[RMDB]
RNA sequence: GGGAACGACUCGAGUAGAGUCGAAAAGAUAUGGAUGUACUUCGAUAAGCUCACAUCGGAAACGAUGUCGAGCUUUUGACGAAGGUAGUCCUAAGUCAGUAACUAAAUGCCUUCGGGCAUUUAGUAAACUUGUUCAGUGAUUCGUCACUGAACAAGUAAAAGAAACAACAACAACAAC
Reactivity to 2A3 in 0.01 (KOAc 150mM, MgCl2 10mM, bicine 150mM(pH8.5), 24C), signal-to-noise 3, nucleotides 027 to 126: g020a010u060a030u070g010g000a020u130g300u300a110c020u040u010c030g170a180u030a300a000g000c000u000c020a000c000a020u010c010g000g030a060a030a000c010g000a010u030g020u030c060g000a010g130c020u010u000u010u050g040a020c010g010a010a010g020g000u040a010g000u000c000c010u010a060a010g000u010c020a020g090u170a060a000c000u000a000a000a010u010g000c000c020u050u080c300g040g020g000c010a000u000u010u000a000g000u000a000a010
Reactivity to DMS in 0.01 (KOAc 150mM, MgCl2 10mM, bicine 150mM(pH8.5), 24C), signal-to-noise 7, nucleotides 027 to 126: g000a020u000a300u000g000g000a000u000g010u010a300c010u000u000c000g010a150u000a020a010g000c000u000c010a020c000a000u000c000g010g010a090a040a120c010g020a000u000g000u000c180g030a010g010c000u000u000u000u010g010a240c130g000a020a010g010g010u020a300g000u000c000c000u000a060a160g000u000c020a120g000u000a110a070c000u000a000a010a010u000g010c000c000u000u010c260g030g000g000c000a000u000u000u000a010g000u000a020a080